[RMDB]
Source information:
This 177-nucleotide RNA was probed chemically with DMS.
RNA sequence: GGGAACGACUCGAGUAGAGUCGAAAAGUGGAGGAGAGACCACCUCCAGAGGACCCCUUCAGCGAACAGAAGAGCUCCCUCCUCCGGAGAGAGAAGACCAUAGCGAUAGGGGGAGAUGCUAGGAGUACCUGCUAAACUAGUUCGCUAGUUUAGCAGGAAAAGAAACAACAACAACAAC
Reactivity to DMS in 0.01 (KOAc 150mM, MgCl2 10mM, bicine 150mM(pH8.5), 24C), signal-to-noise 1, nucleotides 027 to 126: g010u000g040g040a020g030g030a110g000a140g010a160c040c110a070c000c000u000c000c010a050g020a080g000g000a190c000c000c010c030u000u010c090a240g020c000g000a030a120c160a080g000a080a120g040a160g020c030u000c040c000c040u020c020c000u040c270c210g030g030a040g000a000g000a060g000a050a010g020a080c150c070a040u010a150g010c040g010a060u010a060g030g000g000g000g000a090g050a160u000g000c080u010a150g000g050a040g000u000a100
Values cover nucleotides 27 to 126.